Conditions: 150 mM KOAc, 10 mM MgCl2 and 150 mM bicine (pH 8.5), 24 C. Chemical mapping of a 207-nucleotide RNA with 2A3 and DMS. For DMS the reverse transcriptase was MarathonRT. The 2A3 profile rests on 423 reads. Reactivities are given for positions 27 through 156.
RNA sequence: GGGAACGACUCGAGUAGAGUCGAAAACUCGCUGAAAUCAAACAGAUCUCCGUAGCCCCAGCUUAGCAGGAAGACUCACAGCCCCAACAGAAGCAGGCUACUUGGUCUGCGCUAGAAGUGGAAUGAAAAUGUAAUUUUCACAGUUCCUCGCUGGAAAUCCUAUUUAGCUCUUCGGAGCUAAAUAGGAAAAAGAAACAACAACAACAAC
Reactivity to 2A3 in 0.01 (KOAc 150mM, MgCl2 10mM, bicine 150mM(pH8.5), 24C), signal-to-noise 1, nucleotides 027 to 156: c030u030c020g000c040u060g080a040a080a090u100c030a030a080a170c000a080g040a010u010c050u030c080c010g020u060a060g000c000c020c020c000a000g010c010u050u050a030g030c050a040g120g000a150a040g030a040c010u120c060a090c040a040g030c010c020c000c000a030a050c090a080g120a100a000g010c010a000g020g000c000u060a070c080u070u030g020g010u010c000u010g010c000g020c020u020a050g070a210a080g040u050g060g030a020a100u090g080a060a070a000a000u120g080u280a160a120u040u000u020u020c010a020c030a030g000u000u070c000c000u000c030g010c010u050g000g120a000a210a000
Reactivity to DMS in 0.01 (KOAc 150mM, MgCl2 10mM, bicine 150mM(pH8.5), 24C), signal-to-noise 1, nucleotides 027 to 156: c050u000c050g000c030u040g010a120a050a150u000c070a130a070a150c090a110g010a120u000c010u010c020c060g030u000a160g030c050c000c000c030a190g050c070u000u000a110g020c010a060g000g000a080a090g020a230c000u000c110a060c000a150g000c000c000c000c000a070a210c160a130g000a110a140g000c040a050g010g020c010u020a120c160u010u000g010g050u000c000u020g020c000g010c060u000a000g020a140a140g020u000g010g020a060a090u000g010a060a030a050a060u010g000u030a060a130u000u000u000u030c020a070c100a220g030u000u000c020c010u000c080g050c000u020g000g000a070a030a170